[RMDB]
RNA sequence: GGGAACGACUCGAGUAGAGUCGAAAAGCGCAUGCCGAGGGGGUAGCUUUCCUCGUAAAUCCAGCUGCAAAACUCUAGUUGCCAACGACGACAACUACGCUCUGGCCGCUUAAGGCCUAAGCCUCGAAACCGCUUGUGUCCAUGCUCGCGGUGUAGACUAUUAAGUAACCUUCGGGUUACUUAAUAGAAAAGAAACAACAACAACAAC
Reactivity to DMS in 0.01 (KOAc 150mM, MgCl2 10mM, bicine 150mM(pH8.5), 24C), signal-to-noise 3, nucleotides 027 to 156: g020c050g000c060a040u000g020c080c010g000a070g020g020g000g010g020u000a090g010c050u000u010u010c010c020u010c000g020u000a040a070a090u000c030c020a110g000c000u000g000c030a100a090a080a100c110u000c040u010a030g010u010u010g010c010c010a070a180c190g000a200c020g010a010c000a010a030c010u010a030c060g000c020u000c040u000g010g000c000c000g010c250u010u000a080a170g010g020c010c010u000a030a040g000c000c030u020c040g010a090a150a060c030c020g030c020u000u010g010u000g010u010c100c070a110u010g010c010u010c150g010c030g010g010u010g000u000a080g010a190
Reactivity to 2A3 in 0.01 (KOAc 150mM, MgCl2 10mM, bicine 150mM(pH8.5), 24C), signal-to-noise 9, nucleotides 027 to 156: g040c060g010c080a070u160g050c030c010g010a010g000g000g000g010g010u000a000g000c010u020u070u150c000c000u020c030g110u140a010a010a010u020c020c010a010g010c010u010g000c000a030a030a050a190c130u130c060u070a010g010u020u020g020c030c020a180a060c190g140a030c050g040a040c040a030a030c030u140a060c050g000c020u020c040u040g010g000c000c010g030c080u290u190a170a050g010g000c010c000u020a040a010g020c000c020u030c010g050a080a010a010c010c000g010c010u020u020g010u010g060u100c070c030a100u280g010c000u010c010g000c000g010g000u010g010u010a010g000a010

An RNA of 207 nucleotides, treated with DMS and 2A3 and read out base by base. It was measured as part of the RMDB library RSTRND. For 2A3 the reverse transcriptase was SuperScript II with manganese. For DMS, 9,573 sequencing reads were counted. For DMS the reverse transcriptase was MarathonRT.